Source information:
Structure probing data (DMS and 2A3) for a 170-nucleotide construct.

RNA sequence: GGGAACGACUCGAGUAGAGUCGAAAAUCCCGCAGAACCCGAUGGAGUCCCCCGCCAUCCCCUGACGGAGAAAACUGGUCCCGAUAGGGGCACCCACAAUAGGAUGGCAGGAGGGGACUGCGGGUCCCAAGUCUGCGUUUCGACGCAGACAAAAGAAACAACAACAACAAC
Reactivity to DMS in 0.01 (KOAc 150mM, MgCl2 10mM, bicine 150mM(pH8.5), 24C), signal-to-noise 4, nucleotides 027 to 129: u090c070c020c000g050c100a040g030a060a230c000c040c060g030a080u050g000g040a150g010u030c070c050c000c030c100g030c040c010a000u040c000c020c170c110u010g020a170c230g000g020a260g000a110a050a120a120c130u000g000g060u020c000c000c020g030a160u060a050g000g000g000g000c030a050c130c000c030a050c110a030a070u030a120g010g010a010u010g000g040c020a050g010g060a240g000g000g020g020a080c000u010g010c000g000g000g000u030c000c000c000a130a110
Reactivity to 2A3 in 0.01 (KOAc 150mM, MgCl2 10mM, bicine 150mM(pH8.5), 24C), signal-to-noise 5, nucleotides 027 to 129: u000c000c000c000g020c010a010g000a050a040c000c010c050g070a100u240g100g080a070g090u100c000c000c010c010c010g000c000c000a020u040c020c030c010c050u080g020a030c040g040g020a170g050a060a120a050a030c120u220g000g010u040c000c000c000g040a130u220a290g010g000g010g000c020a050c010c040c000a040c020a020a120u070a090g030g000a000u000g010g000c040a030g050g090a090g000g000g030g020a000c000u010g000c000g000g010g000u000c000c000c000a040a030
The reactions ran in a buffer of 150 mM KOAc, 10 mM MgCl2 and 150 mM bicine (pH 8.5), at 24 C.
The 2A3 profile rests on 6,923 reads.